Source information
The record gives the reactivity of an RNA of 177 nucleotides to DMS and 2A3. 2A3 is a SHAPE reagent: it acylates the 2'-hydroxyl of flexible nucleotides of all four kinds. DMS adducts were read by reverse transcription with MarathonRT. For 2A3, 7,622 sequencing reads were counted. Values cover nucleotides 27 to 126. It was measured as part of the RMDB library M2PK90. Conditions: 150 mM KOAc, 10 mM MgCl2 and 150 mM bicine (pH 8.5), 24 C.
RNA sequence: GGGAACGACUCGAGUAGAGUCGAAAAGAAAAUACAAGGCUGACAAAAUCCUUUCCCAACCUCCACGUGGUGUGGGCUGGAUAAUGCAUUAGAAAUGUUGCAUUUAUCAACUGGGAAGGCAAAAAAAUCUAAUGUAUGAGUUCGCUCAUACAUUAGAAAAAGAAACAACAACAACAAC
Reactivity to DMS in 0.01 (KOAc 150mM, MgCl2 10mM, bicine 150mM(pH8.5), 24C), signal-to-noise 6, nucleotides 027 to 126: g000a100a070a090a080u010a080c080a060a070g000g020c060u010g010a070c120a070a100a130a110u000c040c000u000u000u000c000c000c010a050a170c070c040u000c050c030a040c040g020u000g020g010u010g030u010g010g000g020c140u000g010g000a020u000a000a010u000g000c000a010u000u010a040g010a100a090a100u000g010u000u000g000c020a000u010u000u000a020u000c020a080a100c160u010g000g000g010a040a030g010g000c220a010a010a030a070a030a050a060
Reactivity to 2A3 in 0.01 (KOAc 150mM, MgCl2 10mM, bicine 150mM(pH8.5), 24C), signal-to-noise 5, nucleotides 027 to 126: g010a000a020a010a000u140a020c060a050a050g110g000c060u090g090a030c080a030a150a020a120u070c010c010u040u060u050c000c000c020a020a060c020c020u030c020c010a030c090g190u250g100g180u120g040u020g070g030g000c090u080g040g000a000u010a010a010u010g010c010a010u030u100a060g130a120a090a050u110g030u070u020g010c000a010u020u080u140a020u040c020a030a060c070u020g000g000g020a020a010g000g010c020a050a070a010a020a010a000a060